[RMDB]
RNA sequence: GGGAACGACUCGAGUAGAGUCGAAAAUCGUCGACAUGCUCCUUGAAGCUGUAGAACUCACCGUUCUUGUACUUCACGACACCCUUAGUGAGCAUCAGCUUGCUUGCGAUAGCUACGUUGGGCGGCAGCCCUCCGUACGGUUCGCCGUACGGAGGGCAAAAGAAACAACAACAACAAC
Reactivity to 2A3 in 0.01 (KOAc 150mM, MgCl2 10mM, bicine 150mM(pH8.5), 24C), signal-to-noise 5, nucleotides 027 to 126: u060c020g040u000c010g010a020c000a060u080g010c000u020c010c010u000u060g060a050a010g030c060u090g070u120a060g040a080a030c010u040c080a100c030c060g020u040u020c030u030u020g050u070a080c020u060u090c040a020c060g050a010c010a080c050c010c000u010u100a060g000u040g080a000g000c010a040u070c020a030g020c020u050u180g060c000u040u050g030c040g100a110u070a110g030c030u050a040c060g070u100u090g070g010g000c010g040g000c010a040
Reactivity to DMS in 0.01 (KOAc 150mM, MgCl2 10mM, bicine 150mM(pH8.5), 24C), signal-to-noise 5, nucleotides 027 to 126: u000c130g030u000c020g010a120c100a060u000g000c020u000c020c050u000u000g010a060a020g010c050u000g000u000a040g010a060a030c010u010c230a090c270c190g000u010u010c010u000u000g010u000a080c050u000u000c040a050c060g000a080c050a140c030c020c020u010u000a080g010u000g000a020g010c040a060u010c150a060g000c040u000u010g010c030u000u000g000c060g020a090u010a080g010c090u000a060c100g010u000u000g020g010g010c020g000g020c170a150